Structure probing data (DMS and 2A3) for a 177-nucleotide construct. The RNA was probed in 150 mM KOAc, 10 mM MgCl2 and 150 mM bicine (pH 8.5) at 24 C. For DMS the reverse transcriptase was MarathonRT. For DMS, 2,004 sequencing reads were counted.
RNA sequence: GGGAACGACUCGAGUAGAGUCGAAAACACUCGAGACCCGCGUAGAAGGUGAGGUCUUUGGGCCGGUGUCCUUUGUUGGUGAUGACCACAUCCUGGAGCUCUGCGUGCACGCCUCGAGGCACGAAGAAUUUGGCACUAGUUUCGACUAGUGCCAAAUAAAAGAAACAACAACAACAAC
Reactivity to DMS in 0.01 (KOAc 150mM, MgCl2 10mM, bicine 150mM(pH8.5), 24C), signal-to-noise 2, nucleotides 027 to 126: c140a160c000u000c020g000a050g000a070c010c080c010g030c050g020u020a040g020a080a090g000g020u000g000a110g030g010u000c010u000u010u000g020g010g000c060c050g010g010u010g000u000c030c030u020u000u010g010u010u010g010g010u000g010a070u000g010a070c040c010a100c090a070u030c050c020u000g010g000a190g010c070u000c010u000g000c040g020u000g000c080a070c130g000c090c020u010c070g010a050g010g010c110a040c080g010a080a110g000a120
Reactivity to 2A3 in 0.01 (KOAc 150mM, MgCl2 10mM, bicine 150mM(pH8.5), 24C), signal-to-noise 1, nucleotides 027 to 126: c030a020c000u080c030g030a040g040a070c020c040c030g000c020g060u060a070g030a220a000g070g030u000g080a110g000g030u000c000u060u160u100g030g070g000c000c000g020g000u050g070u040c030c110u160u070u090g140u080u100g030g050u130g130a140u150g080a090c010c000a020c030a130u060c020c010u020g000g060a050g060c010u020c000u040g070c000g020u010g000c000a030c060g000c030c000u000c020g000a100g020g010c010a010c070g080a030a080g120a160